[RMDB]
RNA sequence: GGGAACGACUCGAGUAGAGUCGAAAACCUCCUUUCUCACUGUAGAGAAACAGGAAGGGAUUUUAUUAAUAAGAAUGACUGGGGUCACACUUAAAACAACAUCAGAUUUUGAUCUCUUCUGGGCUUGUCAAACACGUGUGUUCGCACACGUGUUUGAAAAAGAAACAACAACAACAAC
Reactivity to 2A3 in 0.01 (KOAc 150mM, MgCl2 10mM, bicine 150mM(pH8.5), 24C), signal-to-noise 3, nucleotides 027 to 126: c000c000u020c000c000u000u050u050c010u000c000a090c080u260g070u290a020g010a010g000a070a100a010c060a020g010g040a010a020g040g000g010a000u000u060u050u070a170u030u130a080a180u040a090a010g130a050a090u070g020a020c020u050g000g130g190g000u070c040a030c000a020c120u040u120a030a070a030a030c080a030a020c010a130u070c040a020g070a230u100u050u120u100g030a030u010c010u000c000u000u010c000u020g010g000g080c040u050u050g040
Reactivity to DMS in 0.01 (KOAc 150mM, MgCl2 10mM, bicine 150mM(pH8.5), 24C), signal-to-noise 2, nucleotides 027 to 126: c010c010u020c000c090u000u000u000c000u000c050a200c200u000g000u090a060g000a110g000a060a020a020c190a220g000g000a030a000g010g000g000a070u000u000u000u010a120u030u080a080a130u000a040a070g000a200a040u000g000a050c000u000g000g000g040g000u010c180a030c180a120c160u030u000a030a030a040a090c200a110a040c170a050u010c120a120g000a080u000u000u020u010g000a040u010c000u000c030u000u060c010u000g000g000g010c070u050u000g000